About this RNA: Chemical mapping of a 177-nucleotide RNA with DMS and 2A3. Values cover nucleotides 27 to 126. The 2A3 profile rests on 4,554 reads. For 2A3 the reverse transcriptase was SuperScript II with manganese. 2A3 is a SHAPE reagent: it acylates the 2'-hydroxyl of flexible nucleotides of all four kinds. DMS adducts were read by reverse transcription with MarathonRT. The RNA was probed in 150 mM KOAc, 10 mM MgCl2 and 150 mM bicine (pH 8.5) at 24 C.
RNA sequence: GGGAACGACUCGAGUAGAGUCGAAAAGAUAUGGACCUUAAGACAUGAGCCGAAACAGCUUGGAUUUAAGCUCGGAAACGAGCUUUGUCAGCUGAGAUAGCUGCUCAACAGCUUAAGGUCCUAAGUCCAGUAACACACAGUUCGCUGUGUGUUACUGAAAAGAAACAACAACAACAAC
Reactivity to DMS in 0.01 (KOAc 150mM, MgCl2 10mM, bicine 150mM(pH8.5), 24C), signal-to-noise 3, nucleotides 027 to 126: g010a090u010a300u000g010g000a000c010c010u000u000a010a020g010a040c110a300u010g010a000g020c010c050g000a230a160a190c000a010g000c000u000u020g010g000a050u000u000u010a010a010g010c020u020c000g010g000a080a120a210c000g020a020g020c000u010u000u000g000u000c000a040g020c010u000g000a040g010a170u020a130g020c190u010g010c010u000c020a030a050c300a180g000c000u000u000a000a000g000g030u000c000c000u000a020a100g010u000c060
Reactivity to 2A3 in 0.01 (KOAc 150mM, MgCl2 10mM, bicine 150mM(pH8.5), 24C), signal-to-noise 3, nucleotides 027 to 126: g060a020u160a080u240g000g000a000c010c020u000u030a010a000g000a010c060a180u150g000a010g040c000c050g090a040a120a010c000a010g020c030u230u300g160g020a120u300u300u180a010a000g010c010u010c010g010g020a000a130a030c010g000a000g010c030u010u000u010g020u020c000a000g000c020u020g020a010g040a070u250a050g080c160u060g000c000u020c010a060a070c070a070g090c000u000u020a020a000g000g010u000c010c010u000a000a000g000u000c020